Structure probing data (2A3 and DMS) for a 177-nucleotide construct. DMS adducts were read by reverse transcription with MarathonRT. The RNA was probed in 150 mM KOAc, 10 mM MgCl2 and 150 mM bicine (pH 8.5) at 24 C.
[RMDB]
RNA sequence: GGGAACGACUCGAGUAGAGUCGAAAAGGAUCCUAAGUACUCUGGGUAACUGCCUCGAGUUCAGUUACCAGUGAGGAGUACUCUAUUUGUCAAAGAACUCGAGGUUGACGGAUAGAGAAUAGGAUCGCUACAGCUAAGUAUUCGUACUUAGCUGUAGAAAAGAAACAACAACAACAAC
Reactivity to 2A3 in 0.01 (KOAc 150mM, MgCl2 10mM, bicine 150mM(pH8.5), 24C), signal-to-noise 4, nucleotides 027 to 126: g010g000a000u000c000c000u000a050a000g040u030a050c000u000c020u080g040g010g000u030a020a020c010u000g010c000c010u010c050g040a030g000u040u050c000a010g000u010u030a010c000c010a040g060u040g100a050g020g030a030g030u050a030c000u000c000u010a040u000u020u030g000u000c010a030a000a070g030a080a020c020u000c040g030a000g050g000u000u020g000a010c020g010g000a000u020a010g030a000g030a020a050u030a030g000g000a000u000c010g000
Reactivity to DMS in 0.01 (KOAc 150mM, MgCl2 10mM, bicine 150mM(pH8.5), 24C), signal-to-noise 8, nucleotides 027 to 126: g010g000a010u000c000c000u010a030a170g020u000a040c000u000c000u000g010g010g010u010a030a040c010u000g010c150c040u000c150g010a100g010u000u010c030a030g010u000u000a020c030c020a120g020u010g010a100g000g000a090g000u000a080c000u000c000u000a010u000u000u000g000u000c030a040a060a090g000a080a020c060u000c060g010a000g010g010u000u000g010a030c040g000g000a090u000a000g000a040g010a140a140u000a020g010g000a010u000c000g010